[RMDB]
RNA sequence: GGGAACGACUCGAGUAGAGUCGAAAAUGCUGGGAGGCUGAAGUGGGUGAAUUCCCUUGGAUGGUUUCUGUGCAACUCUCUUUCUCCCAUUUCUGUGCUGGUUCUAUCCUGAAUGAACAGUGGAUUCACACGUAAGUGAGUUCGCUCACUUACGUGUAAAAGAAACAACAACAACAAC
Reactivity to DMS in 0.01 (KOAc 150mM, MgCl2 10mM, bicine 150mM(pH8.5), 24C), signal-to-noise 4, nucleotides 027 to 126: u010g020c080u000g010g020g010a080g010g000c080u000g010a150a060g040u000g000g000g010u000g000a110a100u000u000c020c010c020u000u010g010g010a080u000g010g000u000u000u010c030u000g010u010g030c070a090a080c080u000c060u000c040u000u000u000c060u000c010c000c010a100u000u010u000c060u000g020u000g010c020u000g010g000u000u000c040u000a100u010c040c080u000g000a080a090u010g000a050a070c060a060g020u000g010g000a150u010u000c110
Reactivity to 2A3 in 0.01 (KOAc 150mM, MgCl2 10mM, bicine 150mM(pH8.5), 24C), signal-to-noise 3, nucleotides 027 to 126: u070g000c030u000g020g010g030a060g060g030c080u040g020a050a020g050u050g020g000g060u060g030a060a090u090u060c000c030c000u030u070g100g010a080u040g040g100u020u080u010c030u040g110u050g010c000a040a090c010u000c000u000c000u030u040u000c050u030c030c020c010a040u030u120u010c040u050g110u060g020c000u050g020g110u040u000c010u010a090u050c020c040u050g120a160a110u100g020a070a010c000a070g020u030g110g030a100u140u110c070